[RMDB]
RNA sequence: GGGAACGACUCGAGUAGAGUCGAAAAUUCACGUUCGCGUAAAUCCAUCACCCCUCGCCAGAAAUAAUAAGAGACACCAGCGUCUUUUAUGCGCUGCCGCAUUAGUCUACUGUUCCAGGUUCCGACAAUUCCCGAUGCUCUAUUUUUGGCCCAAUUCAUAACCCAAUAUAUUCGUAUAUUGGGUUAUAAAAGAAACAACAACAACAAC
Reactivity to DMS in 0.01 (KOAc 150mM, MgCl2 10mM, bicine 150mM(pH8.5), 24C), signal-to-noise 3, nucleotides 027 to 156: u000u010c050a040c030g000u000u000c100g000c060g000u000a050a090a080u010c040c030a040u000c010a100c080c000c000c000u010c030g020c010c030a110g000a100a090a100u010a090a130u000a060a120g020a110g000a070c010a100c140c130a100g020c070g020u000c040u010u010u010u000a050u010g010c030g030c030u000g010c010c050g060c050a080u010u000a060g020u000c020u010a070c040u000g010u000u010c020c010a190g000g030u010u000c020c010g010a050c040a040a200u000u000c010c000c010g000a100u010g010c030u000c060u000a090u000u000u000u000u000g010g000c030c020c010a040a280u000u000c060
Reactivity to 2A3 in 0.01 (KOAc 150mM, MgCl2 10mM, bicine 150mM(pH8.5), 24C), signal-to-noise 2, nucleotides 027 to 156: u090u020c050a020c050g050u120u130c110g000c000g120u070a060a050a040u050c050c030a070u070c110a140c000c000c000c000u020c030g000c010c010a010g040a000a060a010u130a040a040u150a140a010g030a000g000a070c000a010c040c010a010g050c020g080u090c110u100u210u060u090a090u210g030c020g000c020u010g040c040c030g100c020a010u060u000a010g030u020c000u000a040c020u090g030u090u040c040c020a050g000g060u090u010c020c010g030a040c040a040a080u010u040c000c000c000g030a070u080g020c020u050c010u080a130u100u100u000u050u060g070g010c060c020c030a080a060u240u160c130